Structure probing data (DMS and 2A3) for a 177-nucleotide construct. DMS adducts were read by reverse transcription with MarathonRT. It was measured as part of the RMDB library OK1LIB. For 2A3 the reverse transcriptase was SuperScript II with manganese.
RNA sequence: GGGAACGACUCGAGUAGAGUCGAAAAGUAUGUAUGGAUAACCAUACGUACAAAUAAUUGCCUCAUGGUGGUGGCUGAGGGCACCCUCAUGGUGGUGGGUGUGGAAAAUAAAGAUCCGAAAGGAUCAGGAUAGGAUGAUCUUCGGAUCAUCCUAUCCAAAAGAAACAACAACAACAAC
Reactivity to DMS in 0.01 (KOAc 150mM, MgCl2 10mM, bicine 150mM(pH8.5), 24C), signal-to-noise 1, nucleotides 027 to 126: g060u000a000u000g020u000a010u000g000g000a300u090a140a170c000c000a000u000a000c000g020u020a000c000a030a130a080u060a050a070u030u010g020c000c000u080c070a030u010g000g030u010g020g000u000g000g010c000u000g000a010g020g000g040c000a030c010c000c010u000c060a060u020g010g020u010g020g030u000g000g010g000u010g010u020g000g000a060a010a090a140u040a090a080a100g000a010u080c000c000g000a120a030a150g010g000a010u000c000a100
Reactivity to 2A3 in 0.01 (KOAc 150mM, MgCl2 10mM, bicine 150mM(pH8.5), 24C), signal-to-noise 3, nucleotides 027 to 126: g010u000a000u000g010u000a000u020g000g040a150u100a270a170c000c000a000u000a000c000g000u000a000c000a000a050a000u170a000a030u110u090g030c000c000u000c000a020u060g010g030u010g000g010u020g010g060c020u020g040a060g020g070g010c020a010c000c000c000u010c010a040u030g100g030u080g020g020u040g000g040g010u070g040u060g010g090a040a090a000a020u240a040a140a010g000a010u000c010c000g030a020a060a020g000g000a000u020c020a010